[RMDB]
RNA sequence: GGGAACGACUCGAGUAGAGUCGAAAAUUGUCAAAGGUAGGUGACGGCUAGUUGGAACGGAAAAAUUUUACGAAACUUCCUAUUCUCAGAAGUAAAAGGGAAGAGAGAGUGCUUAAGGAAGAAGGGAAGUUGAGGGUGGGUAAGGAGGGAGCGGGAACCAGGGAUUAAUAUUCGUAUUAAUCCCUGGAAAAGAAACAACAACAACAAC
Reactivity to 2A3 in 0.01 (KOAc 150mM, MgCl2 10mM, bicine 150mM(pH8.5), 24C), signal-to-noise 1, nucleotides 027 to 156: u130u010g020u040c010a060a030a030g030g020u070a010g000g030u110g020a000c000g030g050c020u010a000g050u070u100g070g030a020a030c040g000g080a090a040a010a030a120u150u230u200u140a100c070g040a050a050a030c020u040u020c000c020u020a150u170u000c040u020c010a080g010a090a010g040u120a000a010a110a030g080g000g030a070a020g010a020g010a010g010a000g040u010g010c020u070u000a070a000g010g010a010a030g020a040a040g010g010g000a040a010g000u040u060g000a030g000g000g040u210g020g000g000u050a100a040g020g010a020g020g000g000a040g010c140g000g000g000a010a010

Source: RMDB library OK3TST, as collected in RNAgym. This 207-nucleotide RNA was probed chemically with 2A3. The reactions ran in a buffer of 150 mM KOAc, 10 mM MgCl2 and 150 mM bicine (pH 8.5), at 24 C. The 2A3 profile rests on 593 reads.